[RMDB]
RNA sequence: GGGAACGACUCGAGUAGAGUCGAAAAAGACGUAUAUUUUGUAACCGGGGUAGAAUACCGGUGAUUGACUGGAGGGCAAGUCUGGUGCCAGCAGCCGCGGUAAUUCCAGCUCCAGGAGUGUCAUAGUAGAUAAAUACGAAUUCGUUCGUAUUUAUCUAAAAGAAACAACAACAACAAC
Reactivity to 2A3 in 0.01 (KOAc 150mM, MgCl2 10mM, bicine 150mM(pH8.5), 24C), signal-to-noise 9, nucleotides 027 to 126: a000g060a010c030g080u050a050u020a080u250u170u120u160g070u030a020a030c000c000g010g000g000g030u100a070g120a250a050u080a110c000c010g000g010u010g000a010u040u090g040a030c010u000g000g010a020g010g040g040c060a080a030g050u020c010u030g010g030u030g020c020c030a050g000c010a010g070c040c140g020c010g010g000u020a020a050u120u010c010c000a020g020c010u000c010c000a020g010g040a040g040u110g020u040c030a050u070a120g070u010
Reactivity to DMS in 0.01 (KOAc 150mM, MgCl2 10mM, bicine 150mM(pH8.5), 24C), signal-to-noise 8, nucleotides 027 to 126: a080g010a060c060g010u010a070u020a070u010u010u010u020g010u020a140a050c010c010g010g000g000g010u020a110g010a160a100u040a070c010c000g010g010u000g000a050u010u010g000a150c010u000g010g000a050g000g000g020c080a060a070g000u020c020u000g000g010u010g000c020c010a090g040c030a100g010c160c130g010c040g010g010u000a050a120u020u010c020c020a090g010c020u000c010c020a040g000g000a090g020u010g000u000c030a100u010a080g010u010